[RMDB]
RNA sequence: GGGAACGACUCGAGUAGAGUCGAAAAACAUGCGAAUCCAUACCGGCGAGAAGCCAUACCAAUGCCAGUACUGUGAAUAUAGGUCUGCAGACUCUUCUAACUUGAAAACACAUAUAAAAACAAAGCAUAGUAAAGAGAUGCCAUUCAAGUGUGACAAAAAUAAAUGGGACUUCGGUCCCAUUUAUUUAAAAGAAACAACAACAACAAC
Reactivity to DMS in 0.01 (KOAc 150mM, MgCl2 10mM, bicine 150mM(pH8.5), 24C), signal-to-noise 1, nucleotides 027 to 156: a050c070a050u010g040c120g030a120a130u010c010c020a110u000a060c040c010g000g050c070g030a180g010a120a130g000c060c040a100u000a130c050c040a020a140u000g000c020c030a050g020u000a040c090u000g040u010g010a050a090u000a120u020a120g000g000u000c000u010g040c030a050g010a110c060u000c040u000u010c030u020a100a090c030u000u000g000a100a100a070a060c080a040c080a050u000a180u030a040a100a090a180a120c050a050a040a080g040c050a040u000a040g000u000a030a090a110g040a110g020a300u000g030c080c040a100u000u000c020a080a110g010u010g020u000g030a090c040a000a080